[RMDB]
Source: RMDB library OK1LIB, as collected in RNAgym. An RNA of 177 nucleotides, treated with 2A3 and DMS and read out base by base. High DMS reactivity at an A or C suggests that its Watson-Crick edge is free.

RNA sequence: GGGAACGACUCGAGUAGAGUCGAAAAAUGGGUGGCGGCCGCGAUGUCGAGGCCCUCGUGACUCUCAAUUGCUCAACACCCGAUGGCACCGCCUUUCAUGAGAGUAACUCCGGUACCUGCGAGAUGAACGUGCCGUAAUGUUCGCAUUACGGCACGUAAAAGAAACAACAACAACAAC
Reactivity to 2A3 in 0.01 (KOAc 150mM, MgCl2 10mM, bicine 150mM(pH8.5), 24C), signal-to-noise 2, nucleotides 027 to 126: a000u140g060g010g000u010g050g000c010g000g040c010c020g040c150g100a110u170g040u110c130g000a040g000g000c030c000c000u000c040g020u050g010a000c000u000c000u000c030a000a250u190u120g020c010u010c020a150a110c000a080c000c000c040g020a060u090g010g000c050a040c000c080g030c020c000u080u180u170c070a090u110g060a000g020a060g040u040a030a040c000u000c010c000g030g010u020a150c000c000u000g070c110g000a060g020a060u170g060a070
Reactivity to DMS in 0.01 (KOAc 150mM, MgCl2 10mM, bicine 150mM(pH8.5), 24C), signal-to-noise 1, nucleotides 027 to 126: a030u070g000g000g020u030g000g100c160g000g040c130c010g000c080g000a120u020g030u020c030g000a130g000g000c000c000c020u030c030g080u010g020a020c000u060c020u000c020a060a080u000u000g000c090u030c080a060a080c020a080c040c010c030g000a120u000g000g020c000a000c050c000g000c050c000u010u010u000c220a080u020g020a050g000a160g040u010a050a120c080u000c000c000g010g010u000a180c000c030u000g040c220g000a140g040a270u040g080a060

The RNA was probed in 150 mM KOAc, 10 mM MgCl2 and 150 mM bicine (pH 8.5) at 24 C.